This 177-nucleotide RNA was probed chemically with 2A3 and DMS. Reactivities are given for positions 27 through 126. The RNA was probed in 150 mM KOAc, 10 mM MgCl2 and 150 mM bicine (pH 8.5) at 24 C.

[RMDB]
RNA sequence: GGGAACGACUCGAGUAGAGUCGAAAAGAUAUGGAACCGAACUCCUUUUGACGGCUGUUCGGAAACGAAUCAGCCGAUAAGGAGUCGGUUCCUAAGUCAAAGGGAACUGUCUUCGGACAGUUCCCAAGCUAUACUAUCGCUUCGGCGAUAGUAUAGCAAAAGAAACAACAACAACAAC
Reactivity to 2A3 in 0.01 (KOAc 150mM, MgCl2 10mM, bicine 150mM(pH8.5), 24C), signal-to-noise 3, nucleotides 027 to 126: g010a000u030a030u130g000g020a000a030c000c010g050a180a180c000u020c000c050u110u180u200u280g280a120c040g010g000c010u010g000u010u010c020g000g020a020a010a000c000g030a000a060u270c010a050g020c020c020g080a080u070a090a040g000g000a000g000u000c010g010g000u010u000c000c000u000a000a010g000u000c030a010a080a130g000g000g000a000a010c000u000g010u000c030u090u180c300g030g010a010c000a000g000u000u000c000c010c030a010a010
Reactivity to DMS in 0.01 (KOAc 150mM, MgCl2 10mM, bicine 150mM(pH8.5), 24C), signal-to-noise 2, nucleotides 027 to 126: g010a040u010a290u000g000g010a000a000c000c000g000a090a090c000u000c000c000u000u000u000u010g010a200c060g000g010c010u000g010u000u020c010g000g000a050a030a090c010g000a020a020u010c010a010g000c000c000g020a060u010a010a010g000g010a030g010u000c000g000g020u000u010c000c020u000a000a040g000u000c040a040a170a160g010g010g010a020a000c000u000g000u000c000u000u020c250g010g010a030c000a000g010u000u000c010c000c030a000a010